Chemical mapping of a 207-nucleotide RNA with 2A3. Reactivities are rounded to 0.1 and cut off at 0 and 3. For 2A3 the reverse transcriptase was SuperScript II with manganese. The RNA was probed in 150 mM KOAc, 10 mM MgCl2 and 150 mM bicine (pH 8.5) at 24 C.
RNA sequence: GGGAACGACUCGAGUAGAGUCGAAAAGAAGGAAUAGAUUGACAAAUUUGUAAGUUCAGUCUGCACAGGGAUGUGUUGGAGGUUUCUCAAUGACUUCACAUGAUCUUAUUUUUUUUUAGCACCAUUUAUUUUGCCUUUAUGUAUAGGGCAGUUUAAAGUGCUGAUUAUGGUUCGCCAUAAUCAGCACAAAAGAAACAACAACAACAAC
Reactivity to 2A3 in 0.01 (KOAc 150mM, MgCl2 10mM, bicine 150mM(pH8.5), 24C), signal-to-noise 2, nucleotides 027 to 156: g020a010a010g020g050a040a130u140a130g020a030u000u110g010a030c130a020a220a110u090u160u250g130u200a000a190g030u040u040c020a030g010u000c020u070g070c020a000c050a090g050g000g040a000u030g000u000g010u060u000g050g050a030g070g000u050u300u030c080u010c020a070a120u150g030a050c000u080u040c040a000c020a130u010g070a050u060c020u000u100a070u090u050u020u000u000u010u000u050u260a070g020c040a010c090c000a010u050u130u160a130u050u140u260u030g020c010c050u100u040u040a140u120g200u000a070u220a120g010g000g030c010a020g010u030u080u120a110a160a010